RNA sequence: GGGAACGACUCGAGUAGAGUCGAAAAUUUGAGACGAAUUUCGAGGACAUCAAGCUCAUUAUAGAACAUGAACGUAUCUACCAGCAUUAUAUAUUAACGAGUUAUUUUCUCUAAAUAGAGUUUCGCGAGCUGGACCCGCUCAUCCAGCUUCUUGUCCCAGACUGCUCCAAUUCGUUGGAGCAGUCUGAAAAGAAACAACAACAACAAC
Reactivity to 2A3 in 0.01 (KOAc 150mM, MgCl2 10mM, bicine 150mM(pH8.5), 24C), signal-to-noise 2, nucleotides 027 to 156: u160u110u130g000a030g000a000c090g020a060a070u030u090u080c040g000a040g000g000a010c010a060u040c110a070a010g000c020u010c000a090u040u160a100u070a160g030a030a010c010a070u090g050a020a030c060g040u120a120u060c060u070a120c020c020a020g050c020a060u110u060a060u160a050u040a070u180u160a150a060c020g000a010g120u050u070a090u060u080u040u010c020u000c020u030a080a140a090u140a090g060a010g060u060u050u070c060g000c040g010a000g000c010u010g010g000a030c000c040c070g000c010u040c000a020u010c000c010a010g000c000u040u000c010u040u060g030u000c000c010
An RNA of 207 nucleotides, treated with 2A3 and read out base by base. The data come from the RNA Mapping Database (RMDB), library OK3TST. The RNA was probed in 150 mM KOAc, 10 mM MgCl2 and 150 mM bicine (pH 8.5) at 24 C. Values cover nucleotides 27 to 156. 2A3 adducts were read by reverse transcription with SuperScript II with manganese.